Chemical mapping of a 177-nucleotide RNA with DMS and 2A3. The data come from the RNA Mapping Database (RMDB), library OK2TRN. Values cover nucleotides 27 to 126.

RNA sequence: GGGAACGACUCGAGUAGAGUCGAAAAAAGAGUGCGUAAUAGCUCACUAGUCAAGAGAUCCUGCGCCGAAGAUGUCCGGGGCUCAAACUUACCACCGAAGCUAUGGAUGUGCACUACGUGCACGUGGCCAAUGAGUUCUCUUCGGAGAACUCAUUGGAAAAGAAACAACAACAACAAC
Reactivity to DMS in 0.01 (KOAc 150mM, MgCl2 10mM, bicine 150mM(pH8.5), 24C), signal-to-noise 2, nucleotides 027 to 126: a090a070g010a070g040u000g000c070g030u000a110a060u000a070g010c000u010c010a100c110u000a050g010u000c130a070a100g000a060g000a060u020c030c020u000g010c160g010c040c030g020a050a070g010a090u010g010u010c110c060g000g000g010g000c040u010c050a020a060a110c070u000u000a080c040c040a050c070c060g000a080a050g020c050u000a030u010g010g040a080u010g010u000g000c000a010c010u040a090c230g010u010g000c000a030c000g020u000g020g020
Reactivity to 2A3 in 0.01 (KOAc 150mM, MgCl2 10mM, bicine 150mM(pH8.5), 24C), signal-to-noise 2, nucleotides 027 to 126: a000a000g100a040g000u150g020c020g030u050a080a000u040a220g000c000u000c030a040c060u090a040g060u100c070a160a050g020a010g000a220u040c000c000u060g020c030g020c000c010g030a050a010g070a100u080g040u000c030c030g000g010g020g000c020u020c010a070a070a030c050u070u040a050c000c050a020c000c020g110a040a000g040c020u010a010u120g120g000a090u100g040u020g000c010a000c070u200a090c300g000u010g000c000a020c060g030u050g050g020